[RMDB]
RNA sequence: GGGAACGACUCGAGUAGAGUCGAAAAGAGACCAGGCAAAUCCGGUCUCCAGGAGGGCGAGGCUCCGGACGAAGCGAUCGAGCGAAGCGAGUGAGCCCGAGGUCCCUAGAAAAACCCCUAGGCAGGCAUAAACUCGAAGAUUCGUCUUCGAGUUUAUAAAAGAAACAACAACAACAAC
Reactivity to 2A3 in 0.01 (KOAc 150mM, MgCl2 10mM, bicine 150mM(pH8.5), 24C), signal-to-noise 3, nucleotides 027 to 126: g010a000g020a000c040c040a100g010g060c090a050a050a100u170c020c000g020g010u010c000u020c010c000a050g070g020a060g030g020g030c010g050a060g100g000c010u000c000c000g030g020a110c050g010a050a030g020c030g050a150u150c090g030a050g120c010g010a110a030g040c050g010a030g030u180g030a000g010c000c000c000g010a000g000g060u080c000c000c000u000a030g050a020a040a000a010a020c000c010c000c000u010a010g070g000c060a010g040g020c010
Reactivity to DMS in 0.01 (KOAc 150mM, MgCl2 10mM, bicine 150mM(pH8.5), 24C), signal-to-noise 6, nucleotides 027 to 126: g000a030g000a000c000c000a060g040g000c240a120a150a190u060c020c020g010g010u000c000u010c020c120a080g000g000a080g010g000g010c020g000a170g000g010c010u000c000c030g000g010a140c030g000a190a240g000c020g020a120u030c210g020a250g000c040g000a160a300g000c010g000a300g020u030g000a120g010c000c000c020g000a120g000g000u020c000c000c010u010a070g000a060a060a030a110a150c050c010c000c020u020a050g020g020c180a070g000g010c110
The data come from the RNA Mapping Database (RMDB), library RFM100. The record gives the reactivity of an RNA of 177 nucleotides to 2A3 and DMS. For DMS the reverse transcriptase was MarathonRT. The DMS profile rests on 8,447 reads.